[RMDB]
RNA sequence: GGGAACGACUCGAGUAGAGUCGAAAAACUGCCAUACGUGGCAGAAACACGCCUUACCAGGACUAAACAGCAUGUCUAAAAAACAGUCCUUCAUACCUGAUCUGGAGGGUAGAUCAGGAAUACUAAAAAAAUCGGGUGAAGUUCGCUUCACCCGAAACCGUAUAGGGUACUUCGGUACCCUAUACGGAAAAGAAACAACAACAACAAC
Reactivity to 2A3 in 0.01 (KOAc 150mM, MgCl2 10mM, bicine 150mM(pH8.5), 24C), signal-to-noise 1, nucleotides 027 to 156: a000c000u000g000c000c030a030u040a050c180g050u040g010g000c000a000g030a000a000a000c120a010c040g050c000c000u030u050a080c050c040a000g010g010a010c010u060a050a120a080c090a060g060c020a040u130g090u090c050u100a040a000a000a000a000a060c030a040g000u000c010c020u070u120c040a080u070a190c000c000u000g000a000u000c000u010g030g050a060g080g050g020u040a000g020a000u010c010a000g040g000a000a000u050a050c080u120a000a000a000a110a000a000a060u010c000g000g040g000u000g000a020a000g020u030u080c060g000c070u000u000c020a020c000c000c000g000a000a000a000
An RNA of 207 nucleotides, treated with 2A3 and read out base by base. Conditions: 150 mM KOAc, 10 mM MgCl2 and 150 mM bicine (pH 8.5), 24 C. Values cover nucleotides 27 to 156.